[RMDB]
RNA sequence: GGGAACGACUCGAGUAGAGUCGAAAACCGGUGACAGCAAGGCCACGUUAUCAGCCCUGCUCUUUGAAGGCUGACAGAGCAGGCACGCCAAGGUCCCUGUGCUCAGAUCUGCGCUGGGGAGGCUGCCAGCCUGCGCUGUGCCCUUGCCCCCGGGAGAACCUACCCUUUUAUUCGUAAAAGGGUAGGUAAAAGAAACAACAACAACAAC
Reactivity to 2A3 in 0.01 (KOAc 150mM, MgCl2 10mM, bicine 150mM(pH8.5), 24C), signal-to-noise 5, nucleotides 027 to 156: c010c000g000g040u140g040a070c060a030g010c010a010a000g010g000c030c010a020c090g060u170u180a060u030c010a000g010c010c000c020u080g060c030u080c060u170u130u200g090a130a040g000g000c010u010g000a000c030a020g040a020g010c000a000g000g000c010a010c070g000c010c000a070a030g110g070u070c010c000c010u070g020u060g020c010u050c120a190g030a300u100c120u170g000c000g000c030u080g010g030g000g010a030g040g010c060u070g050c040c010a020g000c010c000u000g000c010g010c080u090g010u040g030c020c000c000u000u020g000c080c040c020c000c010g000g020g000a090g050a000
Reactivity to DMS in 0.01 (KOAc 150mM, MgCl2 10mM, bicine 150mM(pH8.5), 24C), signal-to-noise 2, nucleotides 027 to 156: c030c000g020g030u010g010a140c160a080g040c030a060a030g010g050c020c020a070c060g040u000u020a140u000c040a060g040c050c000c010u010g020c100u020c170u000u030u000g020a110a050g020g020c020u020g040a050c010a010g020a050g020c000a020g020g050c010a080c050g000c030c020a090a090g010g000u000c010c000c000u010g030u010g020c030u000c040a190g010a200u010c120u000g010c030g020c030u000g000g020g040g000a060g020g020c050u000g020c000c060a210g000c020c020u000g000c050g030c010u010g000u000g010c150c020c020u000u000g000c000c010c000c010c020g000g000g000a160g000a090

Conditions: 150 mM KOAc, 10 mM MgCl2 and 150 mM bicine (pH 8.5), 24 C.
Structure probing data (2A3 and DMS) for a 207-nucleotide construct.
In probing experiments dimethyl sulfate is read out at A N1 and C N3, which are open when not base-paired.
The DMS profile rests on 4,347 reads.
DMS adducts were read by reverse transcription with MarathonRT.